[RMDB]
RNA sequence: GGGAACGACUCGAGUAGAGUCGAAAAGAUAUGGACGUCCUCAAGAACUUGGAUUUACGCUCGGAAACGAGCGUUGUCAGUUUGAGGUACGUCCUAAGUCAAACAAGGUUCGUUCGCGAACCUUGAAUCACACUAUGCUCUUCGGAGCAUAGUGUGAAAAAGAAACAACAACAACAAC
Reactivity to DMS in 0.01 (KOAc 150mM, MgCl2 10mM, bicine 150mM(pH8.5), 24C), signal-to-noise 2, nucleotides 027 to 126: g030a030u000a300u010g000g010a030c020g010u000c010c010u010c000a060a040g010a090a090c270u010u010g060g020a020u010u010u000a000c000g020c000u000c000g010g000a070a090a180c000g000a000g010c000g040u000u000g000u010c000a040g000u000u000u010g010a010g000g020u000a020c000g000u000c000c010u010a000a080g010u010c020a120a150a300c020a020a010g000g030u010u010c000g010u000u010c290g010c030g000a010a010c000c000u010u000g000a070a130
Reactivity to 2A3 in 0.01 (KOAc 150mM, MgCl2 10mM, bicine 150mM(pH8.5), 24C), signal-to-noise 2, nucleotides 027 to 126: g000a000u000a080u110g010g000a000c000g020u010c010c000u000c020a030a070g120a200a140c150u300u300g170g050a070u300u290u230a000c020g000c010u020c010g020g020a030a020a020c010g000a030g000c000g000u010u020g010u000c000a100g050u020u080u020g020a030g000g040u190a000c000g000u020c000c010u000a000a010g000u000c050a030a020a160c010a010a010g030g000u040u010c020g000u060u130c300g000c010g230a000a000c010c000u000u000g000a000a000
Annotation: Chemical mapping of a 177-nucleotide RNA with DMS and 2A3. For 2A3, 3,441 sequencing reads were counted. It was measured as part of the RMDB library TTRDES. The reactions ran in a buffer of 150 mM KOAc, 10 mM MgCl2 and 150 mM bicine (pH 8.5), at 24 C. For 2A3 the reverse transcriptase was SuperScript II with manganese. The DMS profile rests on 2,391 reads.